Chemical mapping of a 177-nucleotide RNA with 2A3 and DMS. For DMS the reverse transcriptase was MarathonRT.

[RMDB]
RNA sequence: GGGAACGACUCGAGUAGAGUCGAAAAGAUAUGGAUGUCUAGAGCGAUAAGCCUACUCGGAAACGAGAGGCUUUUGACGCUCAAAACAUCCUAAGUCAAAACGAUUCUCACUUCGGUGAGAAUCGAACACAUAUGAAUCGUUCGCGAUUCAUAUGUGAAAAGAAACAACAACAACAAC
Reactivity to 2A3 in 0.01 (KOAc 150mM, MgCl2 10mM, bicine 150mM(pH8.5), 24C), signal-to-noise 4, nucleotides 027 to 126: g020a000u040a020u120g000g010a000u010g010u000c030u070a030g000a000g010c040g090a110u030a110a000g010c010c010u210a300c010u130c010g010g010a060a030a040c010g000a010g000a000g020g010c000u000u000u000u010g010a010c030g010c000u010c010a000a010a000a000c000a000u000c000c000u000a100a010g030u010c020a020a010a070a110c020g000a000u000u010c010u000c010a010c020u060u120c300g130g000u000g000a000g000a000a000u000c000g000a010a000
Reactivity to DMS in 0.01 (KOAc 150mM, MgCl2 10mM, bicine 150mM(pH8.5), 24C), signal-to-noise 7, nucleotides 027 to 126: g000a040u010a300u000g000g010a010u000g010u000c010u000a300g000a000g010c000g020a140u000a010a010g020c000c000u000a100c000u000c010g010g000a100a110a160c000g000a010g000a040g000g010c000u000u000u000u000g020a170c080g000c000u000c010a020a110a260a020c000a010u000c000c000u000a030a100g000u000c030a070a070a110a150c030g000a010u000u000c000u000c000a000c010u000u010c170g020g020u000g000a000g000a010a000u000c000g000a050a110